Notes
An RNA of 207 nucleotides, treated with DMS and 2A3 and read out base by base. DMS adducts were read by reverse transcription with MarathonRT. The 2A3 profile rests on 2,350 reads.

RNA sequence: GGGAACGACUCGAGUAGAGUCGAAAAGGAAUUGGAAGGUCAUCCUUCACAGGAUCGUGUGGAAGUCCUGCUCGGGGCGGAAGCAUUAAGACCAUUCGAGCUAGUCAAUGCGUGGCGUGUCUCUCCGGUGUUUCUCUGGACUUCGGUCCAGAGAAAAACACGAUCACAAGUUCGCUUGUGAUCGUGUAAAAGAAACAACAACAACAAC
Reactivity to DMS in 0.01 (KOAc 150mM, MgCl2 10mM, bicine 150mM(pH8.5), 24C), signal-to-noise 2, nucleotides 027 to 156: g000g000a090a050u000u000g020g020a100a030g010g030u000c120a110u010c000c030u010u010c160a120c110a100g010g000a100u000c120g030u000g010u010g020g000a250a160g020u000c020c000u010g010c070u010c070g000g000g020g000c060g010g010a300a270g000c020a080u000u000a090a110g020a090c030c020a160u000u000c060g010a070g010c020u000a120g040u010c050a060a060u010g010c040g030u000g000g010c050g020u000g000u000c030u010c020u020c020c010g010g010u000g000u000u000u000c000u010c000u000g010g000a040c010u000u010c300g020g020u010c010c010a020g000a020g010a000a010a030a070
Reactivity to 2A3 in 0.01 (KOAc 150mM, MgCl2 10mM, bicine 150mM(pH8.5), 24C), signal-to-noise 3, nucleotides 027 to 156: g070g040a070a070u130u110g050g030a060a020g030g060u120c030a060u080c030c000u050u160c060a050c020a050g030g040a050u080c070g010u060g000u050g010g020a030a030g020u030c010c010u060g080c140u120c110g020g010g000g000c030g010g020a010a010g010c000a010u080u160a100a020g010a020c030c010a030u080u100c030g010a000g010c030u070a020g060u060c060a100a090u100g040c070g070u030g030g000c010g010u070g040u000c030u020c000u010c050c030g040g030u030g050u040u050u000c000u000c000u000g000g020a010c000u010u060c250g030g000u000c000c000a000g000a000g000a010a000a000a000